[RMDB]
RNA sequence: GGGAACGACUCGAGUAGAGUCGAAAAUCGGCACGAGGACGUGCCUGGUUUUGAGUGUGGGAGGAUGUCACGGACAAAUUUCGUGACCGUGUUAGGCCAGCAUCGAAGAGCGUACCUAGCUGCGUUUCAACCUGCGUGGGUUGGGGCGGCUUAGCGGCUAAGUCAUGUAGUUCGCUACAUGACUUAGAAAAGAAACAACAACAACAAC
Reactivity to 2A3 in 0.01 (KOAc 150mM, MgCl2 10mM, bicine 150mM(pH8.5), 24C), signal-to-noise 7, nucleotides 027 to 156: u050c000g010g010c010a000c040g050a090g130g180a100c040g020u020g010c000c010u010g030g010u020u020u030u070g080a060g010u100g000u080g040g040g010a050g040g010a060u110g010u020c010a000c030g000g030a040c140a070a220a100u070u090u060c040g000u010g010a020c010c010g020u050g050u090u060a030g010g000c020c010a020g010c030a040u080c080g060a090a030g020a010g070c020g020u070a100c010c020u020a040g020c030u030g010c000g030u010u040u090c000a010a020c010c020u120g100c150g140u300g010g000g000u010u030g000g000g020g000c020g000g000c010u010u040a010g030c030g010g000
Reactivity to DMS in 0.01 (KOAc 150mM, MgCl2 10mM, bicine 150mM(pH8.5), 24C), signal-to-noise 3, nucleotides 027 to 156: u000c030g030g000c020a050c000g020a130g010g000a220c040g020u000g010c010c010u010g000g020u000u000u000u000g030a120g010u000g020u000g020g010g020a080g020g000a170u000g020u000c000a000c000g020g000a110c090a070a080a190u000u000u000c020g030u010g010a020c020c110g020u000g020u000u000a110g010g020c000c080a130g010c040a140u000c070g000a090a120g020a100g010c040g020u000a020c030c030u000a090g020c020u010g000c030g030u000u000u000c000a020a050c040c020u010g020c190g020u010g020g020g010u000u000g000g000g020g000c030g000g000c030u000u000a060g010c020g020g030
Chemical mapping of a 207-nucleotide RNA with 2A3 and DMS. For DMS, 12,081 sequencing reads were counted. DMS adducts were read by reverse transcription with MarathonRT. It was measured as part of the RMDB library VIROID.